[RMDB]
RNA sequence: GGGAACGACUCGAGUAGAGUCGAAAAGAUCAGGAUCGGGACAAGGCGCUGGAGCUCCUGGCGAUACACAGCGUCACUACAACACGCAUCCGCGGCCGCUGGAAACGAGGCAUCGCCAUGUGGGUUCGCGGCCCUACUGAUUCGUCAGUAGGGCCGCAAAAGAAACAACAACAACAAC
Reactivity to 2A3 in 0.01 (KOAc 150mM, MgCl2 10mM, bicine 150mM(pH8.5), 24C), signal-to-noise 1, nucleotides 027 to 126: g050a060u090c050a010g070g000a040u080c000g030g020g060a040c060a000a060g000g000c000g000c010u010g080g010a000g030c020u010c000c060u000g000g030c000g120a010u060a010c110a000c000a100g060c060g100u060c080a030c030u060a000c010a130a000c010a000c110g070c000a130u050c080c080g070c070g070g010c000c010g000c030u090g040g160a100a000a000c010g000a130g060g000c030a030u000c000g010c010c060a010u010g010u150g030g000g000u000u010c060